[RMDB]
RNA sequence: GGGAACGACUCGAGUAGAGUCGAAAAAUAGAGCGCGCGAAUUGGAAACCAGGGAACCAUAUUACGCGCGCAAGGAAGCGGGCCUUGGUUCCUUGGAAAGAUUAGAUAAUUACCCGGUUCCCGAUAAGGUAUAUCUUGAGUUCGCUCAAGAUAUACCAAAAGAAACAACAACAACAAC
Reactivity to 2A3 in 0.01 (KOAc 150mM, MgCl2 10mM, bicine 150mM(pH8.5), 24C), signal-to-noise 1, nucleotides 027 to 126: a000u060a030g080a020g040c010g020c000g020c020g030a010a120u080u080g140g080a100a110a140c010c000a020g000g010g010a000a000c000c010a040u080a050u220u240a070c000g010c010g030c010g010c000a010a000g060g020a140a000g060c020g030g060g020c020c020u000u060g010g000u000u010c000c000u000u000g000g000a060a060a010g060a020u140u190a030g030a080u100a110a080u150u060a040c000c000c000g030g020u010u010c000c000c000g010a050u060a190a030
Reactivity to DMS in 0.01 (KOAc 150mM, MgCl2 10mM, bicine 150mM(pH8.5), 24C), signal-to-noise 2, nucleotides 027 to 126: a100u000a080g000a160g030c030g050c000g050c020g000a100a080u010u000g010g020a150a110a120c000c000a000g030g000g000a030a020c000c000a040u000a050u000u000a100c030g030c000g000c010g020c000a030a010g000g000a150a060g020c010g000g030g010c090c130u000u000g000g000u000u000c000c000u010u000g000g000a060a050a080g020a100u000u030a070g000a140u020a090a070u000u000a160c000c000c000g000g000u000u000c000c000c030g000a070u010a030a090
The record gives the reactivity of an RNA of 177 nucleotides to 2A3 and DMS. For DMS the reverse transcriptase was MarathonRT. The RNA was probed in 150 mM KOAc, 10 mM MgCl2 and 150 mM bicine (pH 8.5) at 24 C.